About this RNA: The data come from the RNA Mapping Database (RMDB), library OK2TRN. Structure probing data (DMS) for a 177-nucleotide construct. The reactions ran in a buffer of 150 mM KOAc, 10 mM MgCl2 and 150 mM bicine (pH 8.5), at 24 C.
RNA sequence: GGGAACGACUCGAGUAGAGUCGAAAAGUAAGCAAAGACGUAAUAACCGUCAUGGUUAGUAAAUUGAGCGCACGCCGUAAGAAAUGCAAACGCGUUAUGAUUCAGAACACCUGGUGCGCUAUUAUAAAUUAAUGCGGUGGUUCGCCACCGCAUUAAUAAAAGAAACAACAACAACAAC
Reactivity to DMS in 0.01 (KOAc 150mM, MgCl2 10mM, bicine 150mM(pH8.5), 24C), signal-to-noise 1, nucleotides 027 to 126: g000u010a020a050g010c060a000a120a180g020a080c010g000u000a180a090u020a090a030c060c000g010u000c170a080u000g000g010u000u000a030g000u030a050a090a190u020u010g010a050g010c000g080c000a010c000g010c060c130g000u030a120a140g000a130a030a000u000g000c070a030a070a120c210g030c130g000u010u000a060u010g030a110u010u000c120a130g000a140a090c110a110c050c010u000g010g000u000g000c010g000c000u000a000u000u000a050u010a050a100